Description
Structure probing data (2A3) for a 207-nucleotide construct. The RNA was probed in 150 mM KOAc, 10 mM MgCl2 and 150 mM bicine (pH 8.5) at 24 C.
RNA sequence: GGGAACGACUCGAGUAGAGUCGAAAAAACGUUGCAUGAUCGUAAAACAUGCCCGGCUUACCGGGAGCCGCCUUUGAAAGAAAGGUUUACACGGACUCUGUUGCGUUACGCACGUACCUAACUUGUGAAAACGGCAUCUUGUUCGCAAGAUGCCGAACCAGUCCUAUCGGUUCGCCGAUAGGACUGGAAAAGAAACAACAACAACAAC
Reactivity to 2A3 in 0.01 (KOAc 150mM, MgCl2 10mM, bicine 150mM(pH8.5), 24C), signal-to-noise 2, nucleotides 027 to 156: a000a000c010g000u010u010g000c000a010u020g020a030u090c020g090u160a040a040a000a100c000a000u030g010c000c000c000g000g000c010u060u050a120c010c080g010g040g000a000g000c000c010g020c000c000u080u000u020g080a110a080a020g050a020a060a000g020g000u010u140u050a010c100a010c000g190g030a230c050u040c070u070g050u050u060g010c000g000u050u030a060c150g040c020a010c020g010u050a070c010c040u020a100a220c060u080u130g020u050g140a040a030a000a020c000g000g000c000a010u000c010u010u000g040u080u130c180g010c130a010a010g000a000u000g000c020c000g000a000a000